Notes: Structure probing data (DMS and 2A3) for a 207-nucleotide construct. Reactivities are given for positions 27 through 156. The DMS profile rests on 2,214 reads. 2A3 adducts were read by reverse transcription with SuperScript II with manganese. For DMS the reverse transcriptase was MarathonRT. High 2A3 reactivity points to a flexible backbone, as in loops and unpaired stretches.
RNA sequence: GGGAACGACUCGAGUAGAGUCGAAAAGGAAGUGGAUCAUCAUAAAGGUCUUCAUCUUCGUCAUCUUCACAUUGAGCAGGCUAAGGAAGAGAAAGCAUUGGUCUUGGUGUCUCAGGUGGCAGAGGCAGGAGAAAAAUCCAUGUAUAAUUGGAACCGAUCAUCAUGCACAUUUCGAUGUGCAUGAUGAAAAAGAAACAACAACAACAAC
Reactivity to DMS in 0.01 (KOAc 150mM, MgCl2 10mM, bicine 150mM(pH8.5), 24C), signal-to-noise 1, nucleotides 027 to 156: g020g000a100a060g030u000g030g000a050u000c010a110u020c070a160u000a070a110a120g020g020u000c030u000u000c030a100u000c020u000u020c040g060u040c070a060u000c040u000u000c050a000c090a140u020u000g030a060g030c060a190g000g010c050u000a050a140g020g000a060a060g010a100g000a080a100a100g000c080a170u020u000g010g010u000c030u010u010g010g030u000g010u000c030u000c080a100g060g030u000g030g000c040a010g010a060g030g020c040a080g040g010a080g010a000a040a050a080a120u010c020c020a060u020g020u010a070u020a070a120u000u010g010g000a070a250c060c000g010a220
Reactivity to 2A3 in 0.01 (KOAc 150mM, MgCl2 10mM, bicine 150mM(pH8.5), 24C), signal-to-noise 4, nucleotides 027 to 156: g090g000a060a050g020u030g000g020a020u000c010a010u010c040a030u210a140a150a090g020g000u010c000u070u070c040a120u050c020u070u050c010g050u030c030a210u030c040u100u110c050a050c020a130u060u140g020a020g020c080a040g060g000c020u070a110a010g040g010a050a040g050a030g000a100a050a000g020c040a050u030u080g030g010u030c000u050u060g070g000u050g050u020c020u010c040a030g010g050u020g010g010c020a020g010a030g000g000c030a030g020g010a000g000a020a090a030a010a000u000c030c000a010u040g140u060a150u050a170a130u140u050g020g020a000a030c040c040g010a030